[RMDB]
RNA sequence: GGGAACGACUCGAGUAGAGUCGAAAAAUAAAGCGUAAUCGCAUCCCAGUAGCAAAGAGCAGCGUAAAGGCGAAAGCCGAACUCAAGAUCGCAUCGGGCUAAGAUCCGAUCGUAGCCACGCAAAAAAGAACUAUUUUAAGUUCGCUUAAAAUAGUUCAAAAGAAACAACAACAACAAC
Reactivity to 2A3 in 0.01 (KOAc 150mM, MgCl2 10mM, bicine 150mM(pH8.5), 24C), signal-to-noise 4, nucleotides 027 to 126: a000u110a010a080a000g020c010g030u050a090a080u200c050g000c010a020u020c020c000c010a020g100u090a020g000c050a050a150a050g060a030g010c100a010g000c030g060u090a090a110a030g010g000c010g020a040a000a000g000c010c000g020a040a020c040u050c050a050a020g050a110u080c010g000c050a010u020c010g030g020g000c020u120a140a050g050a170u000c020c000g000a030u010c010g010u010a010g050c010c020a020c030g000c010a050a090a020a000a020a050
Reactivity to DMS in 0.01 (KOAc 150mM, MgCl2 10mM, bicine 150mM(pH8.5), 24C), signal-to-noise 6, nucleotides 027 to 126: a080u020a060a080a150g010c000g000u010a110a130u010c030g020c010a100u000c000c020c010a180g010u010a070g020c080a060a080a110g000a080g020c040a070g010c040g030u010a030a100a160g010g000c000g010a080a070a140g010c010c000g000a080a060c050u010c050a080a100g000a060u010c030g020c170a030u000c010g000g000g020c070u010a090a100g000a040u000c060c010g010a010u000c030g020u000a080g010c080c090a050c060g020c060a000a020a050a080a070a070
The record gives the reactivity of an RNA of 177 nucleotides to 2A3 and DMS. The 2A3 profile rests on 8,369 reads. For 2A3 the reverse transcriptase was SuperScript II with manganese. Source: RMDB library M2PK90, as collected in RNAgym. Reactivities are given for positions 27 through 126.